[RMDB]
RNA sequence: GGGAACGACUCGAGUAGAGUCGAAAAGCCACAUAUCCCGUGACAUUGCGAAAGCAAGGCUGCCGGUAGGUAGUCCUGGGCGGCGACAGCCUUGGACUGCGGCGUAAAGGUGUACCUGGGGCCGUUAUAACGCGGUAACAGUUCGCUGUUACCGCAACUAGAAGUGAAUGUUCGCAUUCACUUCUAGAAAAGAAACAACAACAACAAC
Reactivity to 2A3 in 0.01 (KOAc 150mM, MgCl2 10mM, bicine 150mM(pH8.5), 24C), signal-to-noise 3, nucleotides 027 to 156: g020c030c010a030c020a050u120a040u060c000c010c040g040u060g020a060c120a190u070u090g020c030g050a090a040a020g010c010a040a060g010g020c020u070g090c020c010g040g040u080a070g020g050u030a010g000u040c000c000u020g000g020g000c000g020g060c070g050a050c070a020g000c000c010u000u000g000g000a000c000u020g000c000g000g010c010g030u070a130a100a020g080g010u030g020u060a060c080c110u150g020g010g020g010c020c000g000u010u070a140u080a140a060c110g000c000g000g020u000a000a000c010a010g030u070u090c160g070c100u000g000u000u010a000c000c010g000c000a000a010
Reactivity to DMS in 0.01 (KOAc 150mM, MgCl2 10mM, bicine 150mM(pH8.5), 24C), signal-to-noise 1, nucleotides 027 to 156: g000c020c010a030c050a100u000a090u010c030c020c010g000u000g000a060c030a150u000u010g010c020g000a160a130a210g010c020a050a030g020g030c010u000g030c040c000g020g030u000a050g050g000u010a020g030u000c000c020u000g000g010g030c010g050g040c050g050a130c120a230g000c030c000u000u010g010g000a010c020u000g000c020g000g040c000g010u000a050a120a070g010g010u000g010u000a070c020c000u000g020g000g020g030c020c020g030u000u020a080u010a080a190c110g020c000g000g020u010a000a010c010a010g030u020u000c170g000c000u000g010u000u010a030c000c010g030c010a000a010